RNA sequence: GGGAACGACUCGAGUAGAGUCGAAAAUGGUAACCACAGAUCGGCAAUACGCGCGGUUUCGAUAUGGCGUGGAUCGCAAACAAUAACUUUAGCGCCUUUUUCUUUGGCUUUGAGAAUGCGGCGGGCCCCCGCCAAAUAGGUUCGCCUAUUUGGCGGGAAAAGAAACAACAACAACAAC
Reactivity to 2A3 in 0.01 (KOAc 150mM, MgCl2 10mM, bicine 150mM(pH8.5), 24C), signal-to-noise 1, nucleotides 027 to 126: u070g040g050u020a030a040c010c010a010c040a040g100a090u010c010g040g080c060a050a080u110a140c070g070c020g010c030g110g000u030u040u040c060g080a040u060a080u300g040g040c000g030u050g000g020a030u020c060g000c090a000a190a000c060a050a140u110a110a050c010u040u070u170a070g010c040g000c000c000u000u040u030u060u000c020u090u020u120g050g010c000u120u080u040g000a040g040a140a050u120g060c010g000g020c000g060g050g000c000c000
Reactivity to DMS in 0.01 (KOAc 150mM, MgCl2 10mM, bicine 150mM(pH8.5), 24C), signal-to-noise 2, nucleotides 027 to 126: u000g010g000u000a100a120c020c070a100c100a130g010a060u010c040g000g020c050a100a110u010a070c120g010c060g040c040g000g000u020u000u010c070g010a060u010a060u010g030g010c000g050u010g030g000a020u000c040g030c120a030a030a090c110a060a070u010a090a080c070u000u000u020a160g000c060g010c020c030u000u010u010u000u000c030u000u030u020g020g010c010u000u000u010g020a090g000a050a110u000g010c060g040g000c040g040g000g020c030c070

This 177-nucleotide RNA was probed chemically with 2A3 and DMS. For 2A3 the reverse transcriptase was SuperScript II with manganese. The 2A3 profile rests on 896 reads.